[RMDB]
RNA sequence: GGGAACGACUCGAGUAGAGUCGAAAAGAUAUGGAUAGAGCAUCCACCGAAGAACUCGGAAACGAGGGAGGUGUGAUGAACUACUCUAUCCUAAGUCAAAAGUGUGACAAGUUCGCUUGUCACACAACUAUUCGAUUUACUUCGGUAAAUCGAAUAGAAAAGAAACAACAACAACAAC
Reactivity to DMS in 0.01 (KOAc 150mM, MgCl2 10mM, bicine 150mM(pH8.5), 24C), signal-to-noise 4, nucleotides 027 to 126: g010a030u000a300u000g010g000a000u000a010g000a000g030c000a000u000c010c000a010c010c000g000a140a170g020a130a200c020u000c000g000g000a150a090a170c010g020a000g000g000g000a080g010g030u000g000u020g000a000u000g000a050a040c030u010a300c010u000c010u000a010u010c000c000u000a020a090g010u010c030a070a070a100a080g010u000g010u010g000a010c000a010a000g000u000u010c240g020c000u000u000g000u000c000a000c000a010c010a060a110
Reactivity to 2A3 in 0.01 (KOAc 150mM, MgCl2 10mM, bicine 150mM(pH8.5), 24C), signal-to-noise 4, nucleotides 027 to 126: g020a020u090a030u140g000g000a000u000a010g000a000g020c000a000u000c000c000a010c010c020g190a300a070g000a060a020c000u000c010g000g030a070a040a040c010g000a000g010g020g020a040g020g000u060g060u280g020a010u010g000a010a020c030u170a030c010u000c000u000a000u000c000c000u000a080a010g020u000c020a030a000a160a180g020u020g000u010g000a000c000a000a010g000u020u130c280g050c150u010u000g010u000c000a010c000a000c000a000a000
The record gives the reactivity of an RNA of 177 nucleotides to DMS and 2A3. 2A3 adducts were read by reverse transcription with SuperScript II with manganese. Values cover nucleotides 27 to 126. Conditions: 150 mM KOAc, 10 mM MgCl2 and 150 mM bicine (pH 8.5), 24 C.